The data come from the RNA Mapping Database (RMDB), libraries RFM100 and RFMREP. Structure probing data (2A3 and DMS) for a 177-nucleotide construct. Values are in units of 0.01, from 0 to 300, in steps of 10. The reactions ran in a buffer of 150 mM KOAc, 10 mM MgCl2 and 150 mM bicine (pH 8.5), at 24 C. Values cover nucleotides 27 to 126.
RNA sequence: GGGAACGACUCGAGUAGAGUCGAAAAUCAACGGAUAAAAGGUACCUUAGGGAUAACAGGCUGAUCACGCCCAAGAGUUCAUAUCGACGGCGUGGUUUGGCACCUCGAUGUCGGCUCGUCGCAUCCUUCCAGGGAAUACUUUCGAGUAUUCCCUGGAAAAAGAAACAACAACAACAAC
Reactivity to 2A3 in 0.01 (KOAc 150mM, MgCl2 10mM, bicine 150mM(pH8.5), 24C), signal-to-noise 5, nucleotides 027 to 126: u060c010a020a050c050g070g010a030u100a110a150a020a040g080g040u090a080c000c010u040u090a030g000g030g000a040u070a170a020c060a100g170g000c000u010g010a010u000c020a000c010g020c000c000c000a010a010g000a000g030u160u250c110a070u160a070u160c020g000a010c000g010g000c000g000u010g000g000u050u000u010g020g020c020a030c000c010u020c020g010a010u050g110u080c020g020g010c000u000c030g030u020c010g010c010a060u040c000c000u030
Reactivity to DMS in 0.01 (KOAc 150mM, MgCl2 10mM, bicine 150mM(pH8.5), 24C), signal-to-noise 3, nucleotides 027 to 126: u020c070a060a130c180g000g020a070u020a040a070a150a080g000g000u030a060c010c090u020u050a070g000g020g000a130u010a040a070c110a120g010g030c010u000g010a010u000c010a010c000g000c000c000c010a040a300g000a000g000u020u010c190a190u030a110u010c000g010a300c300g000g010c010g030u000g000g000u010u010u030g020g000c000a080c030c030u000c160g020a070u010g010u130c030g000g000c000u000c020g030u000c000g010c080a050u000c030c060u000